Structure probing data (2A3 and DMS) for a 177-nucleotide construct. The reactions ran in a buffer of 150 mM KOAc, 10 mM MgCl2 and 150 mM bicine (pH 8.5), at 24 C. 2A3 adducts were read by reverse transcription with SuperScript II with manganese. The 2A3 profile rests on 5,001 reads. DMS adducts were read by reverse transcription with MarathonRT.
RNA sequence: GGGAACGACUCGAGUAGAGUCGAAAACAGAUGAUGUUCGCAUCAUCUGAAAUAAAAGCCAUGCAGGAAGGAAGGAGCAUGGCAACCAACCAUCCAAAAUAAAAAUCUGUUCCUUCGGGAACAGAAACUAGUCUUUCAAGUUCGCUUGAAAGACUAGAAAAGAAACAACAACAACAAC
Reactivity to 2A3 in 0.01 (KOAc 150mM, MgCl2 10mM, bicine 150mM(pH8.5), 24C), signal-to-noise 4, nucleotides 027 to 126: c010a010g000a000u010g000a000u020g040u070u090c210g000c100a010u010c000a000u000c000u000g010a000a010a000u060a010a080a010a000g000c010c000a010u000g010c020a040g210g220a260a040g160g030a110a030g050g040a110g000c010a000u010g010g020c010a000a010c010c010a010a040c030c020a060u130c020c040a060a090a080a050u250a060a120a060a020a030u020c000u000g020u000u000c000c000u000u040c230g070g000g000a000a000c000a000g000a000a000a000
Reactivity to DMS in 0.01 (KOAc 150mM, MgCl2 10mM, bicine 150mM(pH8.5), 24C), signal-to-noise 2, nucleotides 027 to 126: c010a010g000a040u000g040a010u010g000u000u040c220g040c020a000u000c010a040u000c000u000g010a020a100a120u010a040a040a040a080g000c000c050a000u000g000c030a070g000g020a070a070g010g010a130a170g020g020a230g000c010a000u000g010g030c000a010a060c050c040a090a080c110c100a100u000c040c040a070a070a050a130u040a000a070a030a160a160u000c000u000g000u000u000c000c000u000u010c210g030g000g010a000a000c000a000g000a010a070a040